An RNA of 207 nucleotides, treated with 2A3 and read out base by base.
RNA sequence: GGGAACGACUCGAGUAGAGUCGAAAACAUUACGAAUUCAGUCGCAAAUUGUAGAAUUAGCUACUCUACGAUUUAGUGAGCGUUAGUAACGUUGUAAUAUAAUAUAGUCUUUGGAAGGAUUAUAGUGGAGCCGCGGACAAGUUCGCUUGUCCGCGAACCUAUACGCCCACUUCGGUGGGCGUAUAGGAAAAGAAACAACAACAACAAC
Reactivity to 2A3 in 0.01 (KOAc 150mM, MgCl2 10mM, bicine 150mM(pH8.5), 24C), signal-to-noise 1, nucleotides 027 to 156: c020a050u150u210a070c040g170a060a160u070u090c120a070g120u010c030g010c050a010a010a000u000u020g000u000a000g010a020a030u040u040a020g000c040u050a020c000u010c020u000a000c000g000a000u000u000u070a050g020u000g010a030g080c020g020u030u080a050g000u040a100a050c060g020u020u030g030u040a200a130u070a120u010a220a060u130a000u020a100g030u000c040u070u090u090g070g060a050a050g020g000a000u010u030a010u020a030g060u030g060g120a020g100c100c010g020c000g010g010a000c000a000a000g000u030u130c140g000c230u020u000g010u000c000c000g000c010g000a000a000
2A3 adducts were read by reverse transcription with SuperScript II with manganese. It was measured as part of the RMDB library M2RFPK.